[RMDB]
RNA sequence: GGGAACGACUCGAGUAGAGUCGAAAACCGCACCCUGCUAACGGGUUACUCAAGCAGGAGGGCGAAAGUGGGUAUAAGUGAGGUGCUAGACCCCCAAAAAGUCCCCUCUAAAGGGACACAUCUAAGGGAAGUGCAGUAAAUUCGUUUACUGCACUUCAAAAGAAACAACAACAACAAC
Reactivity to 2A3 in 0.01 (KOAc 150mM, MgCl2 10mM, bicine 150mM(pH8.5), 24C), signal-to-noise 6, nucleotides 027 to 126: c010c000g000c000a040c000c000c000u010g030c010u030a150a040c080g030g040g030u010u070a060c050u050c050a040a020g030c000a010g020g070a070g060g040g000c050g040a100a050a020g050u110g010g030g010u090a110u040a190a040g060u050g110a040g010g050u080g040c000u030a030g070a100c000c010c000c000c030a050a070a010a000a040g020u000c010c010c020c010u030c030u160a030a030a010g000g000g010a000c010a000c000a080u110c090u120a060a080g090g030
Reactivity to DMS in 0.01 (KOAc 150mM, MgCl2 10mM, bicine 150mM(pH8.5), 24C), signal-to-noise 5, nucleotides 027 to 126: c060c010g000c070a060c020c000c000u010g040c030u010a110a120c260g010g000g010u040u020a050c090u010c100a160a050g000c050a030g000g000a110g000g000g010c030g000a020a040a050g000u010g000g010g010u010a070u010a100a080g030u000g000a040g000g000u010g010c040u010a060g020a170c020c010c000c020c030a060a070a060a110a040g020u000c000c000c000c010u000c150u060a070a080a120g020g000g000a020c010a080c160a060u010c060u010a080a090g010g040

An RNA of 177 nucleotides, treated with 2A3 and DMS and read out base by base.
The RNA was probed in 150 mM KOAc, 10 mM MgCl2 and 150 mM bicine (pH 8.5) at 24 C.